[RMDB]
RNA sequence: GGGAACGACUCGAGUAGAGUCGAAAACCGUAGGUGUCCUACCCACCGAAUCUUACGCGACGAAGUGAUCUUCGAAAGAGGAUCACAGAGCGUUGGAUUCGAGGGACACCUAAACGGAAAACUACUGGUUGUAUACUUCGGUAUACAACCAGUAGAAGAUCUACGAAGCGUUCGCGCUUCGUAGAUCAAAAGAAACAACAACAACAAC
Reactivity to 2A3 in 0.01 (KOAc 150mM, MgCl2 10mM, bicine 150mM(pH8.5), 24C), signal-to-noise 1, nucleotides 027 to 156: c000c000g010u010a010g020g010u010g000u000c040c000u060a240c030c050c050a030c030c000g020a000a010u000c000u030u060a000c010g090c070g100a300c050g050a300a050g010u020g000a000u010c000u010u010c020g020a030a050a040g000a040g000g000a000u030c000a020c000a010g000a000g010c000g020u000u010g000g000a010u000u000c000g000a070g000g000g000a000c010a000c000c000u000a020a000a000c010g010g020a070a050a060a060c000u030a010c000u020g000g000u000u010g000u000a000u010a000c000u040u080c300g100g000u010a000u010a000c000a000a000c000c000a000g000u000a000g000a000a000